Chemical mapping of a 177-nucleotide RNA with 2A3 and DMS.
The data come from the RNA Mapping Database (RMDB), libraries RFM100 and RFMREP.
Conditions: 150 mM KOAc, 10 mM MgCl2 and 150 mM bicine (pH 8.5), 24 C.
For DMS the reverse transcriptase was MarathonRT.

RNA sequence: GGGAACGACUCGAGUAGAGUCGAAAACCCAAAUUUGGUAGGGGAACCGUCCUGAAGGAAUCAAACGGAAGGGACGGAUGGUAUCUUCGGAUGCCAUAGAUAGAUGGCUACCGCUCUUGGUGCGAGGGUUGGUACAGACGUUCGCGUCUGUACCAACAAAAGAAACAACAACAACAAC
Reactivity to 2A3 in 0.01 (KOAc 150mM, MgCl2 10mM, bicine 150mM(pH8.5), 24C), signal-to-noise 3, nucleotides 027 to 126: c030c000c000a070a000a040u160u080u070g060g000u030a000g000g040g050g060a010a040c000c010g000u040c010c030u150g030a080a000g040g040a060a130u220c110a260a020a000c030g020g070a050a030g040g000g000a010c000g000g000a000u000g000g000u020a010u030c000u040u010c170g160g000a010u040g000c000c000a000u000a000g070a010u080a060g130a020u040g080g010c000u000a010c010c020g010c000u050c010u020u170g050g000u060g030c020g010a060g060g050
Reactivity to DMS in 0.01 (KOAc 150mM, MgCl2 10mM, bicine 150mM(pH8.5), 24C), signal-to-noise 2, nucleotides 027 to 126: c000c000c000a070a130a100u100u030u020g010g020u000a000g020g010g020g000a120a240c020c040g000u000c000c000u030g010a300a200g000g000a060a100u040c300a080a160a070c070g030g010a260a070g000g000g000a000c000g000g050a070u000g000g040u000a020u000c000u000u100c210g010g010a030u000g020c000c000a000u000a040g020a150u010a080g050a080u010g000g000c080u000a030c030c040g000c120u000c070u000u000g000g000u060g000c030g020a070g000g000